[RMDB]
RNA sequence: GGGAACGACUCGAGUAGAGUCGAAAAGGGCGCUCCCCUCGGUUGUCCCGCCGGAAGGUUCACACCCCCAGCCUCCGCUUCUUGCCUUCUUCGCUUGCGAUCCUCGUCACGUGAGGCUAAUCUCCGACGCUCGGCUUCCUCUUCUCCCGACAAUUGUCUCAUUGCAUAGGUUCGCCUAUGCAAUGAGAAAAGAAACAACAACAACAAC
Reactivity to 2A3 in 0.01 (KOAc 150mM, MgCl2 10mM, bicine 150mM(pH8.5), 24C), signal-to-noise 1, nucleotides 027 to 156: g020g000g020c000g000c040u040c000c010c000c010u020c020g050g000u050u050g010u040c020c000c030g010c010c000g000g050a070a040g070g050u190u200c100a070c030a080c130c000c020c000c010a010g010c000c000u040c010c020g040c030u020u010c020u000u090g060c000c010u070u050c030u060u070c050g030c030u020u130g000c040g000a050u060c020c010u040c010g040u020c040a070c200g100u170g040a040g030g010c000u030a040a120u000c020u010c010c030g060a080c100g030c070u020c030g000g000c000u070u040c000c000u160c050u110u100c070u000c010c000c000g050a050c080a090a120u270u090g020u000